Source: RMDB library TTRDES, as collected in RNAgym. An RNA of 177 nucleotides, treated with DMS and read out base by base.

RNA sequence: GGGAACGACUCGAGUAGAGUCGAAAAAAAGAUAUGGAGCCUGGUCGAGCAUGAACUACGGUCGGGCGCUUUCGGAAACGAAAGCGUCUCUAGCGUGCCGCAUGCGAGACCAGGCUCCUAAGUCAAACGUAGGGAAGUAGUUCGCUACUUCCCUACGAAAAGAAACAACAACAACAAC
Reactivity to DMS in 0.01 (KOAc 150mM, MgCl2 10mM, bicine 150mM(pH8.5), 24C), signal-to-noise 2, nucleotides 027 to 126: a040a100a190g000a030u010a200u010g010g000a030g020c000c000u020g010g020u010c010g020a300g000c000a030u000g000a070a010c180u030a300c010g050g000u010c070g030g010g020c020g020c010u000u000u000c000g010g010a040a040a070c000g000a020a000a020g010c000g060u010c000u010c070u010a210g010c300g000u010g040c030c060g040c030a010u000g020c020g000a300g020a010c000c000a000g000g000c010u000c000c000u020a000a000g000u000c010a090a130a200